[RMDB]
RNA sequence: GGGAACGACUCGAGUAGAGUCGAAAAUGUCGUUUGCGUCACGACCAAACUCAGAAACGAUUUUAGCUGUUGCUUCAGUACUUAGAGACAUUUUAAAACUCCAAAGUAUAUAGAAUGAAAGGACGCAGCUUUUAUGGACGUUCGCGUCCAUAAAAGCAAAAGAAACAACAACAACAAC
Reactivity to DMS in 0.01 (KOAc 150mM, MgCl2 10mM, bicine 150mM(pH8.5), 24C), signal-to-noise 1, nucleotides 027 to 126: u000g040u000c000g010u000u000u010g010c040g030u000c000a120c010g010a030c010c220a090a130a090c000u000c070a140g000a090a070a130c070g000a110u000u000u000u040a080g000c090u000g010u000u020g000c040u000u000c040a170g000u000a000c000u010u010a240g010a000g020a120c120a020u000u000u000u040a080a110a130a120c010u000c010c020a020a030a040g010u000a010u010a090u000a090g010a050a110u000g000a130a080a110g000g010a080c040g010c010a060